[RMDB]
RNA sequence: GGGAACGACUCGAGUAGAGUCGAAAAAUAGUGUUAUUCGUAACACUAUAUAUCCGAACUCAAGGAUUCGUUCCAGAGACAUGCAUGGUAGCAUGAAAGCAACUGAACAAGCGUUCGCGCUUGUUAAUUCAAGAAACCAGUUCGCUGGUUUCUUGAAAAAAGAAACAACAACAACAAC
Reactivity to DMS in 0.01 (KOAc 150mM, MgCl2 10mM, bicine 150mM(pH8.5), 24C), signal-to-noise 2, nucleotides 027 to 126: a010u000a010g010u000g010u010u000a000u000u010c140g040u000a000a000c000a020c000u000a000u000a050u010a070u010c130c020g010a090a090c000u000c000a080a180g020g000a030u000u000c010g000u000u010c000c010a070g000a180g010a280c030a000u000g000c000a080u000g020g000u000a170g020c010a020u000g000a110a090a130g000c120a080a070c110u000g010a030a000c000a010a020g000c000g050u000u010c240g010c010g000c000u000u000g010u000u000a020a130
Reactivity to 2A3 in 0.01 (KOAc 150mM, MgCl2 10mM, bicine 150mM(pH8.5), 24C), signal-to-noise 2, nucleotides 027 to 126: a020u000a000g010u000g000u040u010a010u070u100c260g010u030a010a000c000a000c000u000a000u000a000u000a000u020c050c020g030a140a060c000u020c030a000a040g180g000a020u020u000c020g000u010u000c000c000a010g030a000g000a110c000a010u010g040c000a000u100g300g000u160a050g020c020a010u010g030a080a000a000g050c020a050a090c060u180g020a020a000c040a000a000g010c000g060u090u110c190g040c010g010c070u000u020g000u000u010a000a050

Background
The data come from the RNA Mapping Database (RMDB), library M2PK50. An RNA of 177 nucleotides, treated with DMS and 2A3 and read out base by base. For 2A3 the reverse transcriptase was SuperScript II with manganese. DMS adducts were read by reverse transcription with MarathonRT.